The record gives the reactivity of an RNA of 177 nucleotides to 2A3 and DMS. 2A3 adducts were read by reverse transcription with SuperScript II with manganese. Values cover nucleotides 27 to 126. The RNA was probed in 150 mM KOAc, 10 mM MgCl2 and 150 mM bicine (pH 8.5) at 24 C. Source: RMDB library OK1LIB, as collected in RNAgym. The DMS profile rests on 1,515 reads. For 2A3, 1,912 sequencing reads were counted.
RNA sequence: GGGAACGACUCGAGUAGAGUCGAAAAUGCAAAGCACAUAAUUGACUUUUAAUGCCACAUAUAUCUUUUUAUAUGCUGUCCUGCUCCUAUGAAUUGUAAAAAGAUGUUUACGUAAAUUCAGGGUUAACCUACUACCGCGAUUCGUCGCGGUAGUAGGAAAAGAAACAACAACAACAAC
Reactivity to 2A3 in 0.01 (KOAc 150mM, MgCl2 10mM, bicine 150mM(pH8.5), 24C), signal-to-noise 4, nucleotides 027 to 126: u060g010c020a000a010a040g100c020a080c050a210u200a150a100u280u150g090a190c090u040u060u020u140a140a020u210g030c000c000a060c030a000u060a000u010a040u060c080u000u260u000u110u020a050u010a000u060g060c080u030g030u080c000c000u030g040c030u020c000c010u100a230u220g030a060a000u030u060g010u120a030a020a000a000a040g100a110u180g120u050u060u060a010c030g020u050a080a130a080u000u030c010a010g000g000g070u000u050a050a070
Reactivity to DMS in 0.01 (KOAc 150mM, MgCl2 10mM, bicine 150mM(pH8.5), 24C), signal-to-noise 1, nucleotides 027 to 126: u010g010c140a020a040a040g000c000a120c060a070u030a050a100u010u000g010a170c080u020u000u060u000a020a110u000g000c050c060a130c010a030u030a070u030a020u000c070u000u070u020u000u000a030u010a010u030g000c080u050g000u010c000c020u000g010c070u000c020c010u000a050u040g000a040a020u000u030g000u000a030a030a020a060a040g000a160u010g000u070u020u030a050c120g030u030a100a010a020u000u000c080a060g000g030g000u050u000a100a120